[RMDB]
RNA sequence: GGGAACGACUCGAGUAGAGUCGAAAAGCGUGCGUGUUCGCACGCACGCAAAGCGGCCAGCUCCAGGCCGCCAAACAAUAUGGAGCACAAAUGUGAGCAAAAAAAGAAUGGUGUUCGCACCAUUCAACGUUACUAAGGUGUUCGCACCUUAGUAACGAAAAGAAACAACAACAACAAC
Reactivity to 2A3 in 0.01 (KOAc 150mM, MgCl2 10mM, bicine 150mM(pH8.5), 24C), signal-to-noise 3, nucleotides 027 to 126: g000c010g020u000g000c000g000u040g030u080u150c210g010c100a000c010g020c000a000c010g000c020a030a020a010g000c000g000g000c000c010a050g000c010u000c000c000a000g000g000c000c000g000c000c030a060a130a000c040a030a010u030a040u050g000g010a000g120c000a000c010a000a040a030u290g070u130g050a080g100c110a040a110a050a030a010a010a070g000a010a000u020g000g000u010g030u050u070c200g000c060a000c000c010a000u000u010c000a000a000
Reactivity to DMS in 0.01 (KOAc 150mM, MgCl2 10mM, bicine 150mM(pH8.5), 24C), signal-to-noise 3, nucleotides 027 to 126: g020c000g040u000g020c020g070u000g010u020u030c160g040c030a010c000g030c000a000c000g010c010a030a040a110g010c010g010g000c000c000a170g010c000u010c000c000a010g000g030c000c000g010c010c110a030a080a030c080a020a010u000a070u000g000g000a010g020c000a080c240a040a080a090u010g010u010g020a100g030c150a020a010a040a090a080a100a110g020a000a000u000g000g010u000g010u000u010c240g000c010a020c000c000a010u000u000c010a060a070
Description:
This 177-nucleotide RNA was probed chemically with 2A3 and DMS. For DMS the reverse transcriptase was MarathonRT. High 2A3 reactivity points to a flexible backbone, as in loops and unpaired stretches.